[RMDB]
RNA sequence: GGGAACGACUCGAGUAGAGUCGAAAAAAGAGCAACGAGAUUACUCAUUGCCCAAAAGACAUUAUCAGUGGAUAGCGCACCUGUGUACCCUUCUUCCAGCCUUGCAAUUGUCGCUUGGAUAGGCUCCCUUAGGGUUAAUUUUCGAAUUAACCCUAAGAAAAGAAACAACAACAACAAC
Reactivity to 2A3 in 0.01 (KOAc 150mM, MgCl2 10mM, bicine 150mM(pH8.5), 24C), signal-to-noise 7, nucleotides 027 to 126: a000a000g050a020g000c040a020a020c040g070a010g030a200u090u210a110c020u010c030a030u030u080g020c000c010c000a040a130a010a010g060a020c040a060u070u120a060u180c040a040g070u070g090g050a080u070a070g040c030g000c010a030c040c020u060g010u020g020u190a080c010c010c000u060u030c020u080u010c030c010a010g020c020c010u030u050g020c020a060a140u080u070g060u070c020g000c040u030u040g020g020a030u060a070g060g010c020u040c020c010
Reactivity to DMS in 0.01 (KOAc 150mM, MgCl2 10mM, bicine 150mM(pH8.5), 24C), signal-to-noise 9, nucleotides 027 to 126: a080a070g000a040g010c010a020a020c050g010a060g010a300u000u010a100c020u000c010a070u000u000g010c010c010c010a070a060a090a100g010a090c090a050u010u000a050u000c070a090g020u000g010g010a070u000a040g010c080g010c060a060c040c030u000g010u000g010u000a080c050c020c030u000u000c050u000u000c050c040a080g000c030c030u000u010g000c080a060a110u000u000g010u000c080g010c090u000u010g010g010a090u000a060g010g010c060u000c050c060

An RNA of 177 nucleotides, treated with 2A3 and DMS and read out base by base. Values cover nucleotides 27 to 126. It was measured as part of the RMDB library OK2TST.